An RNA of 177 nucleotides, treated with 2A3 and DMS and read out base by base. 2A3 adducts were read by reverse transcription with SuperScript II with manganese. Values are in units of 0.01, from 0 to 300, in steps of 10.
[RMDB]
RNA sequence: GGGAACGACUCGAGUAGAGUCGAAAAUUUGAAAAGGAAGAAGAUGUGGUGGACUUUUACAUAGAUCUCUUCUUGAAUGCUCAAGAAGUAUCGAAGGAGAUAGUGGUCAAGUUCCAUCGAUCCGUCACAGACAUGUCUCCUUCGGGAGACAUGUCUGAAAAGAAACAACAACAACAAC
Reactivity to 2A3 in 0.01 (KOAc 150mM, MgCl2 10mM, bicine 150mM(pH8.5), 24C), signal-to-noise 1, nucleotides 027 to 126: u180u120u010g050a030a040a000a000g080g040a000a050g000a080a080g000a050u050g080u180g040g020u000g040g000a000c000u000u000u000u100a040c000a000u050a050g110a000u000c000u000c060u050u020c040u070u000g020a000a030u200g000c000u000c050a110a150g190a090a000g050u000a000u120c000g070a040a010g000g000a000g000a000u070a040g050u000g010g040u010c000a000a000g130u300u080c000c000a000u000c000g000a020u080c120c040g040u040c000a000
Reactivity to DMS in 0.01 (KOAc 150mM, MgCl2 10mM, bicine 150mM(pH8.5), 24C), signal-to-noise 1, nucleotides 027 to 126: u000u000u010g000a050a060a080a170g010g010a120a120g000a160a060g000a060u000g010u000g050g020u010g000g000a030c000u020u030u000u020a240c090a000u000a100g000a060u000c020u000c000u000u000c100u010u000g000a120a000u000g040c170u000c000a060a060g000a190a010g050u010a000u000c030g070a060a000g000g020a000g000a010u000a080g020u000g000g000u010c300a070a010g020u020u050c000c010a030u000c040g010a000u000c020c090g060u070c130a180